[RMDB]
RNA sequence: GGGAACGACUCGAGUAGAGUCGAAAAGAUAUGGACGUGUGCAUAGGGUCAAGCGUUGAAAUCGGAAACGAUGGAGCUUGAUUUAUUCCCACACGUCCUAAGUCAAAUCCGUACUUCGGUACGGAAAGUCACACUACUUCUUCGGAAGUAGUGUGACAAAAGAAACAACAACAACAAC
Reactivity to DMS in 0.01 (KOAc 150mM, MgCl2 10mM, bicine 150mM(pH8.5), 24C), signal-to-noise 2, nucleotides 027 to 126: g010a000u000a290u000g040g010a010c010g000u000g010u010g020c130a200u030a180g030g020g030u000c000a010a010g010c000g010u000u040g030a070a140a010u000c000g000g000a090a130a250c000g020a020u010g000g000a130g010c000u000u000g000a030u000u000u000a080u000u000c190c300c000a090c000a000c000g000u010c000c000u000a000a040g000u000c080a080a150a190u000c000c000g010u000a010c020u000u000c180g010g020u000a000c000g010g000a000a020a180
Reactivity to 2A3 in 0.01 (KOAc 150mM, MgCl2 10mM, bicine 150mM(pH8.5), 24C), signal-to-noise 1, nucleotides 027 to 126: g020a000u110a110u070g000g000a010c000g000u000g000u000g000c040a060u040a300g160g000g030u010c020a010a010g030c000g230u300u140g040a070a040a000u010c010g000g000a080a070a020c010g020a010u050g010g040a000g010c000u040u000g010a010u030u020u010a070u040u060c030c000c000a000c010a000c000g000u010c000c010u010a080a000g000u000c020a050a010a170u040c000c010g010u000a010c020u000u080c300g100g010u030a000c010g000g030a050a050a010